Annotation:
The record gives the reactivity of an RNA of 177 nucleotides to DMS and 2A3. It was measured as part of the RMDB library OK2TST. The reactions ran in a buffer of 150 mM KOAc, 10 mM MgCl2 and 150 mM bicine (pH 8.5), at 24 C.
[RMDB]
RNA sequence: GGGAACGACUCGAGUAGAGUCGAAAAUGGCUAUACAUUUAUGGUGCAUGAUUAUUUUAUGCAAGUAAUCGUUCAGAAUAAGCCAGAUAAUAGUAAAAUGCUAUUUGAAUUGAUGGUUAAAAGAAAAGCGUACUAUCGUAUUCGUACGAUAGUACGCAAAAGAAACAACAACAACAAC
Reactivity to DMS in 0.01 (KOAc 150mM, MgCl2 10mM, bicine 150mM(pH8.5), 24C), signal-to-noise 1, nucleotides 027 to 126: u030g010g000c030u000a100u030a100c060a050u000u020u000a190u010g000g040u000g020c120a060u010g020a020u000u000a010u000u020u000u000a040u010g000c150a060a120g000u000a040a040u010c030g010u000u000c130a110g000a170a130u000a060a230g040c010c000a060g050a080u020a000a020u040a080g010u000a040a050a040a220u050g010c020u000a010u010u000u000g000a140a100u000u010g000a150u000g000g000u000u000a060a070a040a080g000a050a050a140a080
Reactivity to 2A3 in 0.01 (KOAc 150mM, MgCl2 10mM, bicine 150mM(pH8.5), 24C), signal-to-noise 1, nucleotides 027 to 126: u080g030g000c000u000a000u040a110c050a020u090u140u160a080u090g060g030u020g000c020a000u040g030a000u030u110a090u040u170u010u010a170u200g060c090a060a020g010u030a020a000u000c020g000u000u000c080a050g010a240a000u080a050a030g020c020c000a000g000a000u210a020a020u020a010g000u020a200a120a090a150u180g000c000u000a010u080u050u020g070a110a110u170u050g020a100u070g110g050u070u180a060a040a100a040g120a000a130a010a000